[RMDB]
Chemical mapping of a 177-nucleotide RNA with DMS and 2A3. 2A3 adducts were read by reverse transcription with SuperScript II with manganese. For DMS, 3,607 sequencing reads were counted. The 2A3 profile rests on 2,597 reads. Reactivities are given for positions 27 through 126. Source: RMDB library M2PK50, as collected in RNAgym.

RNA sequence: GGGAACGACUCGAGUAGAGUCGAAAACUCUGCAUAUUCGUAUGCAGAGAAAUAACGGUCGGCUCAUGCAGCUAGUCGAACAUGCUGCUCGACCUAUUGGUAAAAACCGGAGGUUCGCCUCCGGUAACUAGAGCUAAUUCUUCGGAAUUAGCUCUAGAAAAGAAACAACAACAACAAC
Reactivity to DMS in 0.01 (KOAc 150mM, MgCl2 10mM, bicine 150mM(pH8.5), 24C), signal-to-noise 4, nucleotides 027 to 126: c000u000c000u020g000c000a000u010a000u000u010c160g020u000a000u000g010c010a000g010a010g010a020a070a060u010a080a120c190g000g010u000c010g020g010c080u000c090a040u000g000c030a300g010c010u000a100g010u000c130g020a100a270c050a050u000g010c110u000g010c000u000c010g030a030c010c000u000a050u010u000g030g000u010a080a060a040a090a070c000c000g010g000a020g000g010u000u010c260g010c010c000u000c000c000g000g000u010a010a030
Reactivity to 2A3 in 0.01 (KOAc 150mM, MgCl2 10mM, bicine 150mM(pH8.5), 24C), signal-to-noise 3, nucleotides 027 to 126: c000u000c000u000g000c010a010u040a060u070u080c160g080u060a010u000g010c000a010g010a000g040a010a070a000u100a030a010c080g010g030u000c000g020g010c040u070c220a030u160g000c000a020g020c010u080a040g210u220c070g050a050a020c010a020u100g000c010u010g020c050u060c020g010a010c010c000u020a130u050u170g150g040u120a030a030a000a160a040c000c000g000g000a000g050g020u030u120c210g090c010c000u010c000c000g000g000u000a000a010